Structure probing data (2A3 and DMS) for a 177-nucleotide construct. It was measured as part of the RMDB libraries RFM100 and RFMREP.
[RMDB]
RNA sequence: GGGAACGACUCGAGUAGAGUCGAAAAUAUCGUAAAAUGGUUCAACGCUGACAAAGGCUUCGGCUUCAUCACUCCUGACGAUGGCUCUAAAGAUGUGUUCGUACACUUCUCUGCUAUCCAGAACGAUUCAGCAGAAUAUGUUCGCAUAUUCUGCUGAAAAAGAAACAACAACAACAAC
Reactivity to 2A3 in 0.01 (KOAc 150mM, MgCl2 10mM, bicine 150mM(pH8.5), 24C), signal-to-noise 5, nucleotides 027 to 126: u180a010u000c020g040u070a000a060a020a120u160g050g020u100u070c050a070a010c060g000c030u030g040a060c080a070a150a060g060g000c000u030u020c030g060g000c000u050u010c020a040u020c020a000c060u040c010c000u020g020a030c060g040a030u050g020g000c010u000c020u140a120a170a010g040a050u060g030u010g010u060u090c060g050u130a010c020a000c000u060u010c030u000c010u030g030c010u020a030u060c020c010a020g020a080a050c020g030a030u010
Reactivity to DMS in 0.01 (KOAc 150mM, MgCl2 10mM, bicine 150mM(pH8.5), 24C), signal-to-noise 2, nucleotides 027 to 126: u010a050u010c040g000u010a060a040a140a090u010g010g000u010u000c060a060a080c060g030c030u010g010a120c110a030a100a230g000g010c050u000u000c050g020g000c030u000u020c030a080u000c050a120c090u000c010c010u000g000a070c070g020a050u010g000g020c010u020c110u000a040a100a020g010a060u000g020u000g000u010u010c190g010u000a060c030a030c020u000u000c000u010c060u000g010c060u000a040u000c010c120a100g010a050a070c200g010a150u000
The reactions ran in a buffer of 150 mM KOAc, 10 mM MgCl2 and 150 mM bicine (pH 8.5), at 24 C.